Source information: Conditions: 150 mM KOAc, 10 mM MgCl2 and 150 mM bicine (pH 8.5), 24 C. An RNA of 177 nucleotides, treated with DMS and 2A3 and read out base by base.
RNA sequence: GGGAACGACUCGAGUAGAGUCGAAAAGUCCCAAGGGUACGGCUGUUCGCCGUUUAAAGCGGUACGCGAGCUGGGUUCAGAACGUCGUGAGACAGUUCGGUCCCUAUCCUCCGCGGGCGCAGGAGAACUUUCACUAUGUUUUCGAACAUAGUGAAAGAAAAGAAACAACAACAACAAC
Reactivity to DMS in 0.01 (KOAc 150mM, MgCl2 10mM, bicine 150mM(pH8.5), 24C), signal-to-noise 9, nucleotides 027 to 126: g000u010c010c000c000a150a090g010g010g020u020a020c030g000g010c060u010g000u020u020c120g000c000c000g010u000u010u010a060a120a110g010c010g010g010u030a140c030g010c010g010a040g020c300u000g000g010g000u010u010c010a050g000a010a010c020g010u000c000g010u060g000a230g000a010c010a080g030u000u000c000g000g000u000c020c000c000u000a060u020c180c030u000c050c050g020c010g000g010g010c020g020c020a100g010g010a160g010a090a150
Reactivity to 2A3 in 0.01 (KOAc 150mM, MgCl2 10mM, bicine 150mM(pH8.5), 24C), signal-to-noise 9, nucleotides 027 to 126: g070u020c000c000c010a030a050g160g010g040u130a010c010g020g010c020u050g110u230u140c110g010c010c000g010u010u020u040a030a020a000g000c010g030g050u140a060c020g010c020g030a020g010c030u040g010g050g010u100u140c040a060g010a030a010c010g010u010c010g050u100g070a080g000a020c040a050g000u020u100c010g010g020u030c000c010c000u020a050u090c010c010u050c050c040g000c000g010g020g020c040g000c030a040g040g100a090g010a040a030
2A3 adducts were read by reverse transcription with SuperScript II with manganese. DMS adducts were read by reverse transcription with MarathonRT.